This 177-nucleotide RNA was probed chemically with DMS and 2A3.
For DMS, 3,439 sequencing reads were counted.
Conditions: 150 mM KOAc, 10 mM MgCl2 and 150 mM bicine (pH 8.5), 24 C.
High DMS reactivity at an A or C suggests that its Watson-Crick edge is free.
The data come from the RNA Mapping Database (RMDB), library OK2TRN.
DMS adducts were read by reverse transcription with MarathonRT.
RNA sequence: GGGAACGACUCGAGUAGAGUCGAAAAGCGCUCUAGAUGAAAAGACCGCCAAGGAGAUGGGGCUUACUGAUGAAGCCAGAAAGCAGGUGCAAGCAUUGGCUAGCAACAUCGAGCAGGGGCAACAUUCGAUAUAGGAGCGAUUCGUCGCUCCUAUAUCAAAAGAAACAACAACAACAAC
Reactivity to DMS in 0.01 (KOAc 150mM, MgCl2 10mM, bicine 150mM(pH8.5), 24C), signal-to-noise 4, nucleotides 027 to 126: g030c050g020c080u000c010u000a120g010a190u010g000a080a090a120a090g000a050c090c010g020c040c040a060a140g000g010a110g020a090u010g020g000g010g000c040u000u000a050c060u010g000a070u010g010a090a160g010c020c020a090g000a060a060a120g000c090a070g000g000u010g010c070a080a090g010c050a080u000u010g010g010c030u000a040g020c050a030a030c050a030u010c050g010a130g020c090a060g000g000g000g000c050a070a040c080a090u010u010c110
Reactivity to 2A3 in 0.01 (KOAc 150mM, MgCl2 10mM, bicine 150mM(pH8.5), 24C), signal-to-noise 3, nucleotides 027 to 126: g000c040g020c030u010c040u070a170g010a210u130g080a100a090a060a040g050a040c020c020g010c070c000a040a050g090g010a090g010a040u040g010g040g000g040c010u020u030a030c000u030g090a090u050g020a050a010g020c020c010a020g160a100a110a000g040c090a030g030g080u130g030c060a050a040g010c000a010u010u140g040g000c010u000a000g010c010a010a030c000a040u030c010g000a030g030c010a000g020g030g010g000c000a050a020c020a080u180u260c080